[RMDB]
RNA sequence: GGGAACGACUCGAGUAGAGUCGAAAAGAUAUGGAUCUCCUUUGACUCAGAGGUCUGAUGUCGGAAACGACAUGAGACCGACGAAGACGAGGAGAUCCUAAGUCAAAGUCAAUGUUCGCAUUGACAACACAACCUACGGGUUCGCCCGUAGGUUGUGAAAAGAAACAACAACAACAAC
Reactivity to DMS in 0.01 (KOAc 150mM, MgCl2 10mM, bicine 150mM(pH8.5), 24C), signal-to-noise 1, nucleotides 027 to 126: g000a010u000a200u010g000g000a000u000c040u000c000c000u000u020u000g010a240c170u000c000a010g010a300g000g010u020c000u000g000a030u000g000u000c000g000g000a060a140a180c000g020a010c000a010u000g000a020g020a030c050c000g050a230c220g000a070a040g010a280c160g000a010g000g000a000g000a010u000c000c000u000a000a080g000u000c000a120a170a100g000u000c000a000a010u000g000u020u000c200g020c030a040u040u020g000a000c000a150a120